[RMDB]
RNA sequence: GGGAACGACUCGAGUAGAGUCGAAAAUGAUCGAGCUGCCCGGCUGCAGAUCUGGCAGUUGGAUCUCGGCCAGGCCGGUCAAUGGGCCCGAUCCCAUCCAGCGGAUGUCGUUGGCGAUCUUGGUCAGCAAACCCUCUCGAUUCGUCGAGAGGGUUUGAAAAGAAACAACAACAACAAC
Reactivity to DMS in 0.01 (KOAc 150mM, MgCl2 10mM, bicine 150mM(pH8.5), 24C), signal-to-noise 2, nucleotides 027 to 126: u010g010a000u000c010g010a170g030c140u010g010c010c010c050g030g000c020u000g010c230a020g010a030u000c010u000g010g020c070a140g020u010u000g000g010a020u000c010u010c020g020g000c010c000a040g010g020c030c020g000g020u000c020a060a090u010g010g010g020c030c030c230g010a060u010c010c010c000a110u000c030c040a030g020c010g000g030a170u010g010u000c020g020u000u000g000g010c190g000a050u000c030u000u000g000g010u010c040a140g000
The data come from the RNA Mapping Database (RMDB), library OK2TRN.
An RNA of 177 nucleotides, treated with DMS and read out base by base.
DMS adducts were read by reverse transcription with MarathonRT.
The DMS profile rests on 1,942 reads.